[RMDB]
RNA sequence: GGGAACGACUCGAGUAGAGUCGAAAAGAUUAAGUGGGAGCGUCGCCCUGUCGGUGCAUCGGAUAUUAAUUAGCCAGUGCGUGGCAAUACGCAUAUUGAUGUCUACUUUGGCGUAGACUAUGCCAAUUUAAGGAUUGCUGGGCAAUCCAGCCCUAGACGGAUACUAUUACUUCGGUAAUAGUAUCCGAAAAGAAACAACAACAACAAC
Reactivity to 2A3 in 0.01 (KOAc 150mM, MgCl2 10mM, bicine 150mM(pH8.5), 24C), signal-to-noise 6, nucleotides 027 to 156: g070a040u150u180a060a070g050u110g030g020g010a050g020c020g010u020c010g030c020c030c010u060g060u100c050g030g010u050g060c020a040u050c060g050g000a000u010a040u140u100a160a070u090u080a070g020c020c020a020g020u000g020c020g010u020g060g000c070a020a030u150a070c020g000c010a010u030a080u080u130g120a100u110g000u000c000u010a040c020u060u100u150g120g000c060g000u010a020g010a020c040u040a040u070g030c030c010a060a070u050u080u120a140a030g010g010a020u010u110g010c040u060g010g050g010c020a010a040u070c000c010a010g020c020c000c000u040a050g010a040
Reactivity to DMS in 0.01 (KOAc 150mM, MgCl2 10mM, bicine 150mM(pH8.5), 24C), signal-to-noise 2, nucleotides 027 to 156: g020a110u010u000a050a130g010u010g010g000g000a100g010c040g010u000c090g030c040c000c010u000g000u000c040g030g040u000g020c030a040u010c050g010g010a070u000a070u000u000a090a130u000u000a070g020c020c010a070g000u000g010c020g040u000g020g020c060a070a100u000a070c060g000c000a070u010a100u010u000g030a160u000g000u000c010u000a030c020u010u010u020g020g030c090g000u000a040g010a060c080u010a040u000g030c010c020a050a050u000u000u000a080a150g000g020a110u000u000g010c000u000g010g020g020c030a050a110u000c090c050a070g000c020c020c000u000a100g010a280